[RMDB]
RNA sequence: GGGAACGACUCGAGUAGAGUCGAAAAAAUAAAAGAAGCUAUAAAACAAACUGCUUCGCUAUUUUACCAAAAUACUGCGGAUUCAGGGAUGUUCGUCACACUAUGUGUCUAUAGUUACAAUUACAAAGCAGGAUAUAUGUUUCGACAUAUAUCCUGCAAAAGAAACAACAACAACAAC
Reactivity to DMS in 0.01 (KOAc 150mM, MgCl2 10mM, bicine 150mM(pH8.5), 24C), signal-to-noise 1, nucleotides 027 to 126: a070a030u000a020a070a140a190g020a220a040g050c020u000a160u000a130a060a020a170c040a070a180a130c070u000g020c300u000u000c020g000c150u000a040u000u000u000u000a110c130c290a040a050a000a040u000a000c110u000g050c040g000g000a000u000u000c040a070g000g000g000a200u000g000u000u020c070g020u010c000a040c040a140c110u000a050u000g000u000g070u000c020u000a040u000a020g000u050u000a040c130a040a050u000u040a070c220a020a120a080

This 177-nucleotide RNA was probed chemically with DMS. For DMS the reverse transcriptase was MarathonRT. The reactions ran in a buffer of 150 mM KOAc, 10 mM MgCl2 and 150 mM bicine (pH 8.5), at 24 C. Source: RMDB library OK2TST, as collected in RNAgym.